[RMDB]
RNA sequence: GGGAACGACUCGAGUAGAGUCGAAAAAGUUCGCGCUUCCGUGAAACGCGAAAAUCGGACGGUGGCUGCAAGUCGCAUCGCAAAACCGCGGCAAGUGGAGUUAGCGAGAGGUGGCUGGGUUUUGGCUAGAACACACGGUACUUCGGUACCGUGUGAAUCUAAAUACCAGUUUCGACUGGUAUUUAGAAAAAGAAACAACAACAACAAC
Reactivity to DMS in 0.01 (KOAc 150mM, MgCl2 10mM, bicine 150mM(pH8.5), 24C), signal-to-noise 3, nucleotides 027 to 156: a110g010u000u010c030g020c010g020c020u000u000c030c240g000u010g010a060a020a010c010g000c010g000a030a030a080a080u010c070g010g010a080c030g020g010u000g000g010c020u000g000c040a060a120g010u000c040g030c050a110u010c040g010c020a100a070a100a150c030c060g030c030g000g000c130a070a160g020u010g010g010a170g020u000u000a110g030c040g010a070g020a110g050g020u000g010g010c010u010g000g030g010u000u000u000u000g020g010c030u000a150g010a090a210c000a010c000a000c000g010g000u000a010c020u000u030c300g050g010u000a010c000c000g000u010g020u000g000a020a080
Reactivity to 2A3 in 0.01 (KOAc 150mM, MgCl2 10mM, bicine 150mM(pH8.5), 24C), signal-to-noise 4, nucleotides 027 to 156: a000g070u020u030c020g010c010g000c070u080u030c080c050g180u110g080a140a070a010c040g010c030g020a030a010a000a060u140c030g010g010a010c020g060g010u030g020g010c020u070g010c070a040a020g000u010c000g000c050a060u040c020g040c070a050a060a040a020c030c020g000c030g080g020c140a110a060g020u040g060g010a040g020u080u090a020g020c030g010a040g000a050g050g080u040g010g010c020u010g020g010g040u010u020u060u100g010g010c020u030a040g040a150a010c000a000c010a000c010g010g000u000a010c000u000u070c180g080g000u000a000c000c000g000u000g000u000g000a000a000